[RMDB]
Overview:
This 177-nucleotide RNA was probed chemically with 2A3. The reactions ran in a buffer of 150 mM KOAc, 10 mM MgCl2 and 150 mM bicine (pH 8.5), at 24 C.

RNA sequence: GGGAACGACUCGAGUAGAGUCGAAAAUUCUGCUAACCAACGUGUCGGAGGCAUCAGCCCAGGUAUCUGGCCUGAUCACAGACAACCCCAACCUCAACCAUGUGCUGGCCCAGUUGCGCACGGUCAGGUUCGGUCUUAGCUUCGGCUAAGACCGAACAAAAGAAACAACAACAACAAC
Reactivity to 2A3 in 0.01 (KOAc 150mM, MgCl2 10mM, bicine 150mM(pH8.5), 24C), signal-to-noise 2, nucleotides 027 to 126: u040u000c000u080g030c000u020a040a080c000c010a000a060c050g060u040g030u060c050g040g000a070g020g000c050a020u000c000a000g070c000c050c000a070g010g070u300a090u190c000u020g040g000c000c050u040g010a010u020c010a040c030a060g100a020c020a030a180c010c020c000c020a020a030c100c000u050c060a050a040c080c030a100u050g060u050g060c110u010g080g000c000c000c000a040g040u110u010g080c030g060c000a000c000g020g000u030c010a010g110